[RMDB]
RNA sequence: GGGAACGACUCGAGUAGAGUCGAAAAGAAAGUGUGCACUUGAUACCGCGUGACUUCGGUCACGUAGUGGCACCGCGCAGGACUUUGCUGCCACUACUUAGUCCUGGGGUAUCUUGUGCUCACGAAACGCUGCGCCAUAGUUCGCUAUGGCGCAGCGAAAAGAAACAACAACAACAAC
Reactivity to 2A3 in 0.01 (KOAc 150mM, MgCl2 10mM, bicine 150mM(pH8.5), 24C), signal-to-noise 1, nucleotides 027 to 126: g240a040a030a000g000u000g000u000g000c000a000c000u000u000g000a000u000a000c010c000g100c000g000u000g010a000c000u000u010c070g050g000u040c000a010c010g000u000a000g000u050g080g120c140a010c210c040g000c010g020c040a080g010g040a020c070u180u140u100g000c000u060g050c060c050a060c080u130a000c000u000u040a000g030u060c030c010u000g000g000g000g070u000a000u000c000u030u000g010u000g000c000u030c000a000c030g050a000a000a000